[RMDB]
RNA sequence: GGGAACGACUCGAGUAGAGUCGAAAAGCUACCCGAACGUUCUCGGGGCCAGCGCCGAGUGGAUCACCGGGGACCGCGAGGCACCCGCGCGCCGCAGACCCCGCGCGGGCUGGAGCACCCGGCAGAGGAACGCCAUAAGGUUCGCCUUAUGGCGUUCAAAAGAAACAACAACAACAAC
Reactivity to 2A3 in 0.01 (KOAc 150mM, MgCl2 10mM, bicine 150mM(pH8.5), 24C), signal-to-noise 1, nucleotides 027 to 126: g010c030u060a040c000c000c000g020a050a000c020g070u050u030c020u000c000g000g000g000g000c010c020a100g000c100g010c000c010g020a050g030u020g000g030a220u090c060a120c020c020g020g000g020g020a050c000c010g000c020g000a040g000g060c000a120c000c000c000g020c000g000c000g000c000c060g080c050a050g010a260c000c000c000c000g010c000g000c000g020g010g000c030u000g000g020a090g100c030a180c010c030c000g040g000c050a080g060a020g060
Reactivity to DMS in 0.01 (KOAc 150mM, MgCl2 10mM, bicine 150mM(pH8.5), 24C), signal-to-noise 1, nucleotides 027 to 126: g000c040u000a060c000c030c000g000a060a120c020g000u000u040c000u070c030g000g000g000g000c060c000a030g000c280g050c000c000g000a300g040u040g000g000a070u000c050a160c060c000g070g000g000g030a040c000c030g070c110g000a300g000g000c060a260c000c000c000g160c000g060c000g090c080c150g000c030a110g000a020c010c010c050c010g000c070g010c000g040g000g000c090u040g000g030a090g000c260a090c000c000c000g000g050c170a100g030a090g000